Annotation
Structure probing data (2A3 and DMS) for a 207-nucleotide construct. Conditions: 150 mM KOAc, 10 mM MgCl2 and 150 mM bicine (pH 8.5), 24 C. For DMS, 3,685 sequencing reads were counted. DMS adducts were read by reverse transcription with MarathonRT. Source: RMDB library OK3TST, as collected in RNAgym.
RNA sequence: GGGAACGACUCGAGUAGAGUCGAAAAGAUGCUCAGACUUUGGUGGGGGUGCUGUUAGGAGCUGUUCUGCCUAAGGACAAAGCAUCAGACUGUGUGAUAUGAGGGACAUGUUCUGGCUCUGCCCAGGAAAGAUCUUCAAGCAUAAGUUAACACCACAAAUUUAUUAAAUGUUCGCAUUUAAUAAAUUAAAAGAAACAACAACAACAAC
Reactivity to 2A3 in 0.01 (KOAc 150mM, MgCl2 10mM, bicine 150mM(pH8.5), 24C), signal-to-noise 4, nucleotides 027 to 156: g010a010u010g000c010u020c040a020g040a110c020u020u060u070g010g010u050g010g000g010g020g090u070g020c020u030g050u240u170a110g070g140a020g000c030u050g180u110u020c000u010g010c000c000u030a020a020g000g010a060c030a010a160a000g000c000a010u040c000a020g020a020c010u020g020u020g010u020g140a080u070a110u210g030a060g020g010g020a000c030a070u120g030u090u040c010u010g000g020c030u030c170u300g010c000c000c020a010g010g020a040a020a010g030a070u020c010u040u030c040a050a010g000c010a020u040a090a060g010u020u060a070a030c030a040c070c010a050c070a050
Reactivity to DMS in 0.01 (KOAc 150mM, MgCl2 10mM, bicine 150mM(pH8.5), 24C), signal-to-noise 2, nucleotides 027 to 156: g000a110u000g030c010u010c030a200g020a130c030u000u000u000g010g030u000g040g000g010g040g010u000g020c010u010g000u000u000a120g040g030a120g030c020u010g000u000u000c010u010g030c040c010u000a030a100g040g020a080c070a070a120a090g020c020a040u010c040a200g020a050c020u000g010u010g000u000g020a150u000a100u010g000a100g030g010g000a070c140a130u000g030u000u000c040u020g010g000c010u000c120u000g010c070c030c010a110g030g010a030a070a130g000a110u000c030u000u000c040a060a260g030c020a090u000a040a110g010u000u010a040a100c040a110c000c020a070c070a060